[RMDB]
RNA sequence: GGGAACGACUCGAGUAGAGUCGAAAAACGAGGUACGCCUGGAAAAUAUGACCGGUGUCAUAGCCUCUAGCACACAGAGGUCGCGUGGGUUCAACUCCCCCCCUUUUCCGAGGGUAUCGGAAACCAAAAAACACAAUUUGGUUCGCCAAAUUGUGAACUACUAUGCGGAGUUCGCUCCGCAUAGUAGAAAAGAAACAACAACAACAAC
Reactivity to 2A3 in 0.01 (KOAc 150mM, MgCl2 10mM, bicine 150mM(pH8.5), 24C), signal-to-noise 3, nucleotides 027 to 156: a010c020g020a030g040g040u070a030c030g030c030c080u110g040g050a120a050a040a060u110a080u060g030a030c040c110g130g030u130g030u060c020a060u050a040g000c020c000u000c020u040a050g040c090a050c000a010c020a060g010a010g010g030u040c020g000c030g080u080g010g020g020u070u070c020a070a090c040u040c000c000c000c000c000c000c020u010u090u030u000c000c000g000a000g020g010g000u100a040u000c010g000g000a000a000a000c030c010a040a070a040a000a040a020c000a000c000a010a000u000u010u010g040g010u050u080c170g000c020c000a000a000a000u000u000g000u010g000a000a000
Reactivity to DMS in 0.01 (KOAc 150mM, MgCl2 10mM, bicine 150mM(pH8.5), 24C), signal-to-noise 1, nucleotides 027 to 156: a030c100g010a060g040g050u000a000c020g050c020c000u000g030g010a040a020a080a090u000a030u020g000a060c000c020g040g010u000g010u000c050a040u000a070g010c010c000u000c000u000a120g040c260a190c040a090c170a050g020a060g020g000u000c040g050c100g050u000g010g000g010u000u000c060a070a300c030u000c030c020c000c000c000c000c010u000u040u000u000c000c020g010a050g010g000g050u010a030u010c010g060g010a020a030a060c210c050a000a090a100a090a100a240c030a000c000a030a020u000u020u000g000g020u000u000c300g040c010c010a020a050a020u030u010g040u000g000a040a150

The data come from the RNA Mapping Database (RMDB), library M2RFPK. The record gives the reactivity of an RNA of 207 nucleotides to 2A3 and DMS. For 2A3 the reverse transcriptase was SuperScript II with manganese. The reactions ran in a buffer of 150 mM KOAc, 10 mM MgCl2 and 150 mM bicine (pH 8.5), at 24 C. The DMS profile rests on 1,802 reads.